[RMDB]
RNA sequence: GGGAACGACUCGAGUAGAGUCGAAAACAGAACAAGGUUAUGAGGUUAUCGAUGUCCAAGGUGGCAUGAUGUCCUUUGAAGAACUUUAAAAAUUUGCAUUUCUCCUACUUGGUGUGGACUGGGUAGGAAACAUGUUGUUAUUCGUAACAACAUGUUUAAAAGAAACAACAACAACAAC
Reactivity to 2A3 in 0.01 (KOAc 150mM, MgCl2 10mM, bicine 150mM(pH8.5), 24C), signal-to-noise 9, nucleotides 027 to 126: c030a020g120a080a030c060a070a040g040g000u040u040a050u140g010a000g010g020u040u070a020u020c110g100a030u050g010u000c020c020a170a150g230g080u220g030g000c000a000u010g000a010u010g030u040c000c000u030u030u040g050a070a060g050a040a010c020u080u090u150a080a100a020a080a140u130u140u170g050c070a070u030u030u020c020u010c000c000u000a010c010u010u020g020g020u090g070u170g130g130a020c010u010g020g000g000u000a000g000g000
Reactivity to DMS in 0.01 (KOAc 150mM, MgCl2 10mM, bicine 150mM(pH8.5), 24C), signal-to-noise 9, nucleotides 027 to 126: c060a120g000a100a120c210a040a030g000g000u000u000a040u000g000a020g010g000u000u010a010u000c010g010a020u000g020u000c000c010a200a140g020g020u030g020g000c010a010u000g000a020u000g000u000c000c000u000u000u000g010a060a060g000a020a010c020u000u000u010a030a060a070a090a120u020u010u010g010c170a190u000u000u000c030u000c000c000u000a010c000u000u000g000g020u000g010u030g010g010a030c000u000g000g000g010u000a000g000g000
Background: The data come from the RNA Mapping Database (RMDB), libraries RFM100 and RFMREP. This 177-nucleotide RNA was probed chemically with 2A3 and DMS. The RNA was probed in 150 mM KOAc, 10 mM MgCl2 and 150 mM bicine (pH 8.5) at 24 C. Values cover nucleotides 27 to 126. 2A3 adducts were read by reverse transcription with SuperScript II with manganese.